[RMDB]
An RNA of 177 nucleotides, treated with DMS and 2A3 and read out base by base. 2A3 is a SHAPE reagent: it acylates the 2'-hydroxyl of flexible nucleotides of all four kinds. The reactions ran in a buffer of 150 mM KOAc, 10 mM MgCl2 and 150 mM bicine (pH 8.5), at 24 C. For 2A3 the reverse transcriptase was SuperScript II with manganese.
RNA sequence: GGGAACGACUCGAGUAGAGUCGAAAAUGGUGACAGCGAUGAUAAGACGUUGAUGUCUUUCCUUAAAGCCUGGGUUAAGCGUUGCGCGGUUCACGCCAAUGGGGACAGUUGCGACGACAACGACGCAUCAAGGGGGUGCUUUCGAGCACCCCCUUGAAAAAGAAACAACAACAACAAC
Reactivity to DMS in 0.01 (KOAc 150mM, MgCl2 10mM, bicine 150mM(pH8.5), 24C), signal-to-noise 1, nucleotides 027 to 126: u030g000g000u000g000a050c070a000g010c030g010a020u000g040a130u050a080a060g000a010c070g030u020u000g070a160u000g080u000c040u000u030u010c000c030u000u000a060a050a150g000c030c000u000g010g010g010u000u000a040a130g000c020g000u050u000g000c000g000c000g000g070u020u000c000a020c060g000c070c070a090a120u030g000g080g000g020a040c050a040g000u000u020g000c020g000a080c040g000a060c080a110a040c120g000a100c090g020c160a160
Reactivity to 2A3 in 0.01 (KOAc 150mM, MgCl2 10mM, bicine 150mM(pH8.5), 24C), signal-to-noise 1, nucleotides 027 to 126: u190g040g000u040g070a060c080a000g000c000g120a120u120g000a090u100a120a060g050a050c060g030u070u080g060a050u140g000u000c000u000u010u070c000c000u030u110a070a000a070g100c060c050u100g100g000g000u000u210a040a000g040c000g000u060u000g000c010g000c000g080g000u050u000c060a010c110g080c070c040a050a070u110g020g000g020g030a030c050a060g000u030u190g080c050g020a040c010g000a010c000a100a020c040g010a020c090g000c010a050